[RMDB]
RNA sequence: GGGAACGACUCGAGUAGAGUCGAAAACAGGAAGCGGCCGGGGCAGCCUUGCUCUCCAUAGACGGCUCCCCCCGGUGGAUCCCGUGGCGAUUCCUGAAAAAAGCUGCAUGCCCAAGACCAGACGCCACCGAUGGAGGUAGUUCGCUACCUCCAUCGGAAAAGAAACAACAACAACAAC
Reactivity to DMS in 0.01 (KOAc 150mM, MgCl2 10mM, bicine 150mM(pH8.5), 24C), signal-to-noise 1, nucleotides 027 to 126: c040a210g000g000a080a100g000c170g000g040c000c000g000g000g000g000c300a060g020c000c000u040u020g000c090u000c030u020c200c190a180u010a090g000a000c140g000g000c000u000c120c110c050c010c010c020g020g010u000g000g000a150u000c020c000c060g040u000g000g020c090g000a070u050u000c010c020u000g000a000a120a170a000a120a120g000c190u000g000c150a000u040g000c000c000c000a040a130g000a080c090c190a070g070a090c050g040c000c000a010
Reactivity to 2A3 in 0.01 (KOAc 150mM, MgCl2 10mM, bicine 150mM(pH8.5), 24C), signal-to-noise 1, nucleotides 027 to 126: c030a040g080g080a050a080g070c020g100g030c030c020g000g000g000g020c010a020g000c000c000u050u180g030c010u000c000u000c040c000a150u190a080g040a050c030g000g000c000u010c050c000c000c020c000c010g000g000u020g020g000a040u110c040c010c010g030u040g040g020c010g000a040u000u060c000c010u030g000a150a060a000a000a000a000g070c030u020g000c020a000u110g000c000c000c010a060a010g050a010c000c030a000g030a050c010g030c030c010a040